[RMDB]
RNA sequence: GGGAACGACUCGAGUAGAGUCGAAAAGAUAUGGAGUGGUGGGAGAAUACCAUCGGAAACGAUGGAAUAUUCGAGGAUCACCCUCCUAAGUCAAACCAGAGUAAUUCGUUCGCGAAUUACUCUGGAACUUCUACUAAGACUUCGGUCUUAGUAGAAGAAAAGAAACAACAACAACAAC
Reactivity to DMS in 0.01 (KOAc 150mM, MgCl2 10mM, bicine 150mM(pH8.5), 24C), signal-to-noise 3, nucleotides 027 to 126: g010a020u000a180u010g000g000a010g000u010g040g000u000g000g000g000a040g000a010a010u000a060c000c000a000u000c000g020g000a060a060a070c000g010a010u000g000g010a100a070u000a020u000u000c000g000a140g020g000a080u000c000a010c010c010c000u000c000c010u000a010a080g000u000c020a130a150a220c010c000a010g000a010g010u000a000a010u000u000c000g010u000u010c260g020c020g010a010a000u000u000a010c000u000c010u010g000g000a020a040
Reactivity to 2A3 in 0.01 (KOAc 150mM, MgCl2 10mM, bicine 150mM(pH8.5), 24C), signal-to-noise 3, nucleotides 027 to 126: g020a020u050a030u080g000g000a010g050u300g070g010u020g000g000g000a030g000a010a000u020a040c010c000a000u010c010g000g010a030a030a020c000g000a000u020g040g010a070a120u100a020u050u020c030g030a300g010g010a010u000c000a000c000c010c000u000c000c010u010a100a010g030u010c060a070a050a100c020c010a010g000a010g000u000a000a010u000u010c000g040u050u150c300g000c000g140a000a000u000u010a000c000u020c000u000g000g000a000a000

An RNA of 177 nucleotides, treated with DMS and 2A3 and read out base by base. 2A3 adducts were read by reverse transcription with SuperScript II with manganese. The DMS profile rests on 3,975 reads. The reactions ran in a buffer of 150 mM KOAc, 10 mM MgCl2 and 150 mM bicine (pH 8.5), at 24 C.